[RMDB]
RNA sequence: GGGAACGACUCGAGUAGAGUCGAAAAGAUAUGGACGCCGACACAGCUUUGAUCUACCCGUCGGAAACGACGGUGUAGGGAGCUGUACGGCGUCCUAAGUCAAAAGUCGAAACUUCGGUUUCGACAAUCCGAUUAUUACGUUCGCGUAAUAAUCGGAAAAAGAAACAACAACAACAAC
Reactivity to 2A3 in 0.01 (KOAc 150mM, MgCl2 10mM, bicine 150mM(pH8.5), 24C), signal-to-noise 1, nucleotides 027 to 126: g000a010u030a020u090g010g000a010c000g010c020c020g090a090c030a030c020a120g000c010u300u300u080g030a050u020c000u010a000c000c000c030g000u000c020g020g000a030a020a010c000g030a010c000g050g070u110g000u020a010g020g000g020a010g000c000u010g010u020a020c000g000g000c020g000u010c010c000u000a000a000g000u010c000a000a020a000a220g010u010c010g000a000a000a000c000u070u120c300g170g010u000u010u030c010g000a000c010a010a020
Reactivity to DMS in 0.01 (KOAc 150mM, MgCl2 10mM, bicine 150mM(pH8.5), 24C), signal-to-noise 2, nucleotides 027 to 126: g000a030u000a190u010g000g010a030c010g050c000c000g050a120c220a060c040a000g010c010u010u000u000g010a040u040c010u000a010c030c010c000g020u000c000g000g000a030a040a100c000g030a020c010g020g010u000g000u000a000g010g000g010a010g030c000u010g020u000a040c000g010g040c010g030u000c010c000u000a000a060g000u000c010a120a100a130a130g010u000c000g010a010a000a000c000u000u010c270g020g000u010u000u000c000g000a010c010a030a050
The record gives the reactivity of an RNA of 177 nucleotides to 2A3 and DMS. The reactions ran in a buffer of 150 mM KOAc, 10 mM MgCl2 and 150 mM bicine (pH 8.5), at 24 C. Reactivities are given for positions 27 through 126. For 2A3, 3,330 sequencing reads were counted. 2A3 is a SHAPE reagent: it acylates the 2'-hydroxyl of flexible nucleotides of all four kinds. It was measured as part of the RMDB library TTRDES. For DMS the reverse transcriptase was MarathonRT. For DMS, 2,081 sequencing reads were counted.